[RMDB]
An RNA of 177 nucleotides, treated with DMS and 2A3 and read out base by base. The reactions ran in a buffer of 150 mM KOAc, 10 mM MgCl2 and 150 mM bicine (pH 8.5), at 24 C. 2A3 adducts were read by reverse transcription with SuperScript II with manganese. Source: RMDB library OK2TRN, as collected in RNAgym. For DMS, 3,751 sequencing reads were counted. Reactivities are rounded to 0.1 and cut off at 0 and 3. For DMS the reverse transcriptase was MarathonRT.

RNA sequence: GGGAACGACUCGAGUAGAGUCGAAAAUCCGGCCGCGUUGGCUACUAUCUGCGGCCAUGACCAAACGAGCGGCAACGGCCGCCAUGGUGAUGUUGCUGACGUUAACGGUUGCGGAUCCACGCACCAGCUAUGAGACGAAGUUCGCUUCGUCUCAUAGAAAAGAAACAACAACAACAAC
Reactivity to DMS in 0.01 (KOAc 150mM, MgCl2 10mM, bicine 150mM(pH8.5), 24C), signal-to-noise 4, nucleotides 027 to 126: u010c020c030g010g010c050c070g020c000g010u020u000g000g000c230u010a050c120u010a060u000c060u010g030c010g010g010c010c020a050u000g010a240c070c080a100a060a080c130g010a090g000c090g010g020c010a070a090c080g000g000c020c010g010c170c270a020u020g000g010u000g020a090u010g010u000u000g000c010u000g000a060c060g000u000u000a080a150c120g000g020u000u010g030c060g000g000a090u000c110c100a110c100g010c070a110c040c060a160g020
Reactivity to 2A3 in 0.01 (KOAc 150mM, MgCl2 10mM, bicine 150mM(pH8.5), 24C), signal-to-noise 2, nucleotides 027 to 126: u000c010c000g020g020c080c030g040c020g050u040u030g070g020c010u050a050c030u050a050u030c060u110g000c000g010g000c000c010a030u090g100a100c050c010a110a000a070c100g060a100g190c160g050g000c030a030a110c100g110g000c000c040g040c080c060a180u150g020g000u060g020a120u130g050u040u030g000c000u020g000a040c020g030u070u100a120a020c030g030g000u020u200g040c020g000g010a020u060c030c010a070c020g020c010a080c050c010a020g020